[RMDB]
RNA sequence: GGGAACGACUCGAGUAGAGUCGAAAAGGCAGCUCGCCCUUAAAUACUGUUUCCACUACUGCUCCUUUACUGUAAGUUUCCACCGAAAGAUAUUAACAGUAAUUAUUAGUACUUUAGUGGAAUUUUAACACCUGCGCUGUUUCGACAGCGCAGGUGUAAAAGAAACAACAACAACAAC
Reactivity to 2A3 in 0.01 (KOAc 150mM, MgCl2 10mM, bicine 150mM(pH8.5), 24C), signal-to-noise 1, nucleotides 027 to 126: g050g050c000a140g000c000u030c080g110c000c000c050u060u080a000a080a000u200a120c090u050g100u000u000u000c000c000a000c000u000a000c000u080g050c000u000c020c040u000u000u000a000c000u020g070u020a000a090g120u000u100u100c000c110a110c000c060g290a240a150a000g150a080u000a140u300u020a210a000c000a000g140u050a000a000u150u080a000u030u120a000g050u000a120c000u070u080u000a000g000u000g000g000a000a050u000u200u000u000a020
Overview: The record gives the reactivity of an RNA of 177 nucleotides to 2A3. For 2A3, 316 sequencing reads were counted. The data come from the RNA Mapping Database (RMDB), library RFM100. Conditions: 150 mM KOAc, 10 mM MgCl2 and 150 mM bicine (pH 8.5), 24 C.